[RMDB]
RNA sequence: GGGAACGACUCGAGUAGAGUCGAAAAAACGCUGGGACCCAGGCAGUCCCCCGACCCUCAACAGCUCACUGAAGCGCGCACGGUGAGACAUGAGGUGUCGGCGGCCCGGCUGCUGGGUCCUGUGCUGAAGCGCGCACGGCAACCGAAAGGUGCGAAAGUUCAGUUAAACGUUCGCGUUUAACUGAACAAAAGAAACAACAACAACAAC
Reactivity to 2A3 in 0.01 (KOAc 150mM, MgCl2 10mM, bicine 150mM(pH8.5), 24C), signal-to-noise 1, nucleotides 027 to 156: a000a000c020g000c000u000g010g000g000a020c010c020c020a040g220g030c000a000g060u100c030c010c010c000c000g020a030c020c040c010u000c020a090a210c030a180g010c020u000c020a000c000u050g060a160a030g000c000g020c020g000c020a000c000g010g010u010g000a000g040a060c090a270u300g020a010g000g010u080g000u000c000g000g000c080g000g000c090c110c070g030g000c000u000g030c020u000g000g000g000u000c000c000u000g000u020g020c010u000g020a060a010g010c010g000c000g000c010a000c000g000g000c000a020a000c000c000g020a060a030a040g000g000u050g030c080g020a160a060a000

Source: RMDB library RNAMAK, as collected in RNAgym. The record gives the reactivity of an RNA of 207 nucleotides to 2A3. Values cover nucleotides 27 to 156. The RNA was probed in 150 mM KOAc, 10 mM MgCl2 and 150 mM bicine (pH 8.5) at 24 C.